[RMDB]
RNA sequence: GGGAACGACUCGAGUAGAGUCGAAAACACCAUCUUGGGCAACGUGGCAAAACUCUACAAAAAAAUACAAAACUUAGCCAGGCAUGGUGGCAUGCGCCUGUAGUCCCAGCUACUUGGUAGGCUGAGGCAAGGAUCAGAGUUUCGACUCUGAUCCUUGAAAAGAAACAACAACAACAAC
Reactivity to DMS in 0.01 (KOAc 150mM, MgCl2 10mM, bicine 150mM(pH8.5), 24C), signal-to-noise 2, nucleotides 027 to 126: c190a130c030c030a080u000c030u000u010g010g010g010c180a050a040c140g050u010g030g000c070a070a110a110a100c000u010c030u000a070c040a020a000a000a130a090a050a010u010a040c090a020a050a060a040c130u000u020a020g000c010c000a050g030g020c060a060u000g000g020u010g030g030c060a010u000g010c050g010c010c020u000g000u000a050g010u000c010c000c010a020g000c020u000a040c030u020u010g030g000u000a050g020g000c010u000g010a080g030g040
Reactivity to 2A3 in 0.01 (KOAc 150mM, MgCl2 10mM, bicine 150mM(pH8.5), 24C), signal-to-noise 1, nucleotides 027 to 126: c040a000c010c010a020u020c030u040u060g000g040g000c030a040a060c030g010u040g020g000c050a010a080a000a260c050u050c020u100a040c120a020a160a000a050a010a030a040u250a050c120a050a130a120a050c030u030u040a010g020c010c000a000g090g040c010a010u040g050g070u060g140g080c020a040u080g030c000g020c010c020u000g000u010a000g020u040c000c000c000a030g000c020u000a010c000u090u130g110g000u070a090g010g010c010u020g000a050g010g070